[RMDB]
RNA sequence: GGGAACGACUCGAGUAGAGUCGAAAAGAUAUGGACCAAAUGAGCCUUGGAUUUAUAUACUACAAAUGUAGAUCGGAAACGAUCUACCACUUUGUAGUAUAUUGUCAGGCUCUUUGGUCCUAAGUCACCAUGCUAUUUUGUUCGCAAAAUAGCAUGGAAAAGAAACAACAACAACAAC
Reactivity to 2A3 in 0.01 (KOAc 150mM, MgCl2 10mM, bicine 150mM(pH8.5), 24C), signal-to-noise 2, nucleotides 027 to 126: g020a000u110a000u250g000g020a020c010c000a020a030a130u300g010a020g000c030c060u180u220g100g020a020u030u300u010a040u030a010u020a000c020u000a000c000a020a000a010u300g000u010a010g010a020u010c020g050g100a060a100a040c030g000a010u000c010u010a000c000c000a060c020u000u030u040g000u010a000g000u000a000u000a000u000u010g010u020c000a000g000g050c000u000c010u000u000u020g000g000u000c000c000u010a000a000g000u030c000a000
Reactivity to DMS in 0.01 (KOAc 150mM, MgCl2 10mM, bicine 150mM(pH8.5), 24C), signal-to-noise 2, nucleotides 027 to 126: g000a060u000a300u010g010g010a030c000c000a020a020a030u020g010a000g030c000c000u020u000g020g000a050u010u010u000a000u000a000u000a000c000u000a000c000a000a150a000u000g000u000a010g010a010u000c010g010g000a220a140a300c010g000a010u000c000u000a000c030c030a010c040u000u010u000g000u000a000g010u000a010u010a000u000u000g010u010c020a040g000g000c000u000c000u010u010u010g010g030u020c000c000u010a000a100g000u000c060a300

Chemical mapping of a 177-nucleotide RNA with 2A3 and DMS.
For 2A3 the reverse transcriptase was SuperScript II with manganese.